Conditions: 150 mM KOAc, 10 mM MgCl2 and 150 mM bicine (pH 8.5), 24 C. An RNA of 177 nucleotides, treated with 2A3 and DMS and read out base by base. Values are in units of 0.01, from 0 to 300, in steps of 10. For 2A3 the reverse transcriptase was SuperScript II with manganese. For 2A3, 1,785 sequencing reads were counted. It was measured as part of the RMDB library OK1LIB.

RNA sequence: GGGAACGACUCGAGUAGAGUCGAAAACUCAUUGUGAAUAAGCAUUGGGAUGGAACGUGAUCAUGCGCACGGAAGCGCGACGUGCGAGCGAAGCGCAAGAGCUCGCAUGAUCAUGGAAAUAAAGAAAGGGAAUAACUUACUUCGGUAAGUUAUUCCCAAAAGAAACAACAACAACAAC
Reactivity to 2A3 in 0.01 (KOAc 150mM, MgCl2 10mM, bicine 150mM(pH8.5), 24C), signal-to-noise 3, nucleotides 027 to 126: c020u010c010a020u040u000g010u030g110a300a090u270a230a010g000c000a000u010u030g010g040g060a050u080g080g140a170a060c010g010u000g000a020u000c000a000u000g030c010g000c000a020c020g060g120a030a060g000c020g000c010g010a000c010g000u070g010c030g000a040g010c000g000a010a000g000c000g000c070a140a030g020a020g100c080u010c020g000c000a000u010g000a000u020c000a000u000g000g060a020a050a000u300a060a100a030g130a060a050a080
Reactivity to DMS in 0.01 (KOAc 150mM, MgCl2 10mM, bicine 150mM(pH8.5), 24C), signal-to-noise 2, nucleotides 027 to 126: c000u040c010a100u010u040g010u030g000a180a170u030a160a130g000c030a070u000u020g000g000g060a070u000g000g000a090a040c000g010u070g020a010u000c000a000u000g000c000g000c150a120c050g000g020a260a180g000c000g000c010g050a220c060g000u000g000c230g010a290g000c040g050a070a300g020c000g020c000a030a220g040a260g030c170u050c000g000c000a000u000g000a000u000c000a000u050g000g000a040a090a050u030a040a080a090g000a080a030a150